[RMDB]
RNA sequence: GGGAACGACUCGAGUAGAGUCGAAAAUUUACUAUAGCUUCGCAUUGGUAUUGGAUAAUUAAUGUGUAGGAUAGGUCGGAGACAUUGAAGCAGGCACGCUAGUGUUUGUGGAGUCGCCCUUGAAAUAGCUAUUGCUAAAUUUCGAUUUAGCAAUAGCAAAAGAAACAACAACAACAAC
Reactivity to DMS in 0.01 (KOAc 150mM, MgCl2 10mM, bicine 150mM(pH8.5), 24C), signal-to-noise 7, nucleotides 027 to 126: u010u020u010a090c020u000a040u000a090g020c020u010u000c030g010c010a030u000u000g000g010u000a060u010u010g000g000a150u030a050a040u010u010a040a030u010g020u010g010u000a030g000g010a040u000a020g000g020u010c080g010g010a190g020a050c040a150u020u020g000a120a200g000c020a010g010g000c020a010c010g010c220u020a090g020u000g010u000u000u000g000u000g010g000a020g010u000c010g000c020c000c040u000u030g010a050a040a050u010a110
Reactivity to 2A3 in 0.01 (KOAc 150mM, MgCl2 10mM, bicine 150mM(pH8.5), 24C), signal-to-noise 8, nucleotides 027 to 126: u050u040u050a050c020u020a010u020a100g160c010u040u040c010g000c020a020u010u030g040g020u070a060u080u210g190g050a100u110a210a020u130u050a030a010u050g020u010g050u050a020g020g030a030u020a030g040g020u040c070g060g030a060g000a030c050a060u050u130g010a020a000g020c010a000g020g000c010a000c020g060c110u110a060g000u010g010u010u010u010g010u020g010g010a010g000u010c010g020c010c000c000u010u090g080a070a060a020u080a030
An RNA of 177 nucleotides, treated with DMS and 2A3 and read out base by base. DMS adducts were read by reverse transcription with MarathonRT. The data come from the RNA Mapping Database (RMDB), libraries RFM100 and RFMREP.